[RMDB]
RNA sequence: GGGAACGACUCGAGUAGAGUCGAAAAUGACAUUUUGAUCCUAAAUCCACGGUUUUAUAACCCCAGGUAUGGAUGGGAGCAAUAUCAUUCAUACCCGCAUGUUCCAUAAAAAGAUACGGCUCCUCCACCAGGCAUACUAGUUCGCUAGUAUGCCUGGAAAAGAAACAACAACAACAAC
Reactivity to DMS in 0.01 (KOAc 150mM, MgCl2 10mM, bicine 150mM(pH8.5), 24C), signal-to-noise 2, nucleotides 027 to 126: u020g000a090c000a140u000u010u010u000g000a110u000c020c020u000a040a030a080u020c070c010a140c130g000g000u000u000u000u070a110u000a060a100c040c000c080c060a050g000g000u000a060u000g010g040a030u000g000g020g000a070g000c150a050a010u010a040u030c030a050u000u000c050a020u020a130c060c010c100g000c080a060u020g010u000u020c000c020a050u010a090a080a060a090a080g000a070u000a010c100g010g010c030u000c040c000u000c030c110a170
Reactivity to 2A3 in 0.01 (KOAc 150mM, MgCl2 10mM, bicine 150mM(pH8.5), 24C), signal-to-noise 5, nucleotides 027 to 126: u090g020a000c010a030u070u100u030u100g070a060u050c010c020u040a120a040a070u010c020c000a040c060g020g050u050u030u040u080a140u070a080a080c010c010c000c020a050g050g010u110a050u020g000g010a010u020g010g000g010a090g040c030a060a060u050a040u160c000a000u060u000c010a020u050a070c000c000c020g040c030a050u100g030u030u020c030c010a040u200a080a120a010a010a030g090a030u090a040c000g010g020c010u010c000c000u010c000c000a040
About this RNA
This 177-nucleotide RNA was probed chemically with DMS and 2A3. For 2A3, 3,532 sequencing reads were counted. High 2A3 reactivity points to a flexible backbone, as in loops and unpaired stretches. Reactivities are given for positions 27 through 126. DMS adducts were read by reverse transcription with MarathonRT. The RNA was probed in 150 mM KOAc, 10 mM MgCl2 and 150 mM bicine (pH 8.5) at 24 C.